[RMDB]
RNA sequence: GGGAACGACUCGAGUAGAGUCGAAAAGAGAAAAAGAAAAGGACCACUCCUGCGGGAGUUAAGGCAAUACGGACAGCCGGGUCCAAUGCCGAAAAAGAAAAAGAAAAAGAAAAAGAAAAAGAAAGAAAUCAUACUCAUAUUUCGAUAUGAGUAUGAUAAAAGAAACAACAACAACAAC
Reactivity to 2A3 in 0.01 (KOAc 150mM, MgCl2 10mM, bicine 150mM(pH8.5), 24C), signal-to-noise 2, nucleotides 027 to 126: g060a020g020a010a090a000a050a030g160a070a120a000a020g020g000a000c030c000a000c000u000c000c000u000g020c160g030g020g050a000g010u080u110a050a050g000g000c000a000a090u170a120c020g010g060a020c010a040g030c030c000g000g010g000u000c000c000a030a000u020g000c000c000g160a030a020a090a000a030g120a040a100a020a030a000g120a020a030a000a010a000g160a040a070a010a010a000g070a000a120a000a020a000g060a090a140a010g070a040a220
Reactivity to DMS in 0.01 (KOAc 150mM, MgCl2 10mM, bicine 150mM(pH8.5), 24C), signal-to-noise 2, nucleotides 027 to 126: g050a300g010a060a070a030a120a090g000a070a090a120a210g000g000a030c040c040a050c010u000c000c010u000g000c200g050g000g000a000g010u010u020a050a030g000g030c000a000a040u030a060c070g020g000a040c030a100g030c010c020g000g040g000u010c010c020a020a030u060g000c000c000g020a160a080a030a130a120g010a050a030a090a060a080g010a030a030a020a040a050g000a070a000a020a070a120g000a060a080a030a090a070g000a080a070a090g000a060a090
Source: RMDB library OK1LIB, as collected in RNAgym. Structure probing data (2A3 and DMS) for a 177-nucleotide construct. Values cover nucleotides 27 to 126. The reactions ran in a buffer of 150 mM KOAc, 10 mM MgCl2 and 150 mM bicine (pH 8.5), at 24 C. For 2A3 the reverse transcriptase was SuperScript II with manganese.